RNA sequence: GGGAACGACUCGAGUAGAGUCGAAAAACAACCCUUUCUUUGUCGAUGUUCAACAGUGGGGUUAUGUAGGCAAUCUUGCUACUAAUCACGAUCGUUAUUGCUCUGUCCAUCAAGGAGCUCAUGUGGCCAACUACUCCCUUCGGGGAGUAGAAAAGAAACAACAACAACAAC
Reactivity to 2A3 in 0.01 (KOAc 150mM, MgCl2 10mM, bicine 150mM(pH8.5), 24C), signal-to-noise 9, nucleotides 027 to 129: a000c090a060a090c010c000c000u050u070u020c050u100u060u050g060u040c030g050a050u030g050u100u090c020a080a060c000a090g030u060g040g040g000g020u020u010a070u220g050u020a040g060g060c020a060a120u080c120u090u210g020c000u020a040c030u040a040a040u070c040a020c120g060a080u110c060g050u080u090a080u110u070g010c000u000c000u040g050u060c050c010a050u060c030a060a080g050g000a020g030c010u020c040a050u130g040u090g030g000c020c000a020a010
Reactivity to DMS in 0.01 (KOAc 150mM, MgCl2 10mM, bicine 150mM(pH8.5), 24C), signal-to-noise 8, nucleotides 027 to 129: a080c300a110a140c030c000c010u000u000u000c050u070u020u020g040u020c050g050a080u050g040u030u010c080a050a090c100a070g000u000g020g010g050g030u000u000a070u080g040u020a030g020g040c070a040a050u040c130u020u010g040c000u020a000c000u020a020a020u000c060a100c040g020a110u040c020g040u030u030a090u000u000g030c020u050c040u000g020u030c090c100a090u070c090a090a090g030g020a010g040c000u020c120a060u040g040u020g000g060c000c120a090a150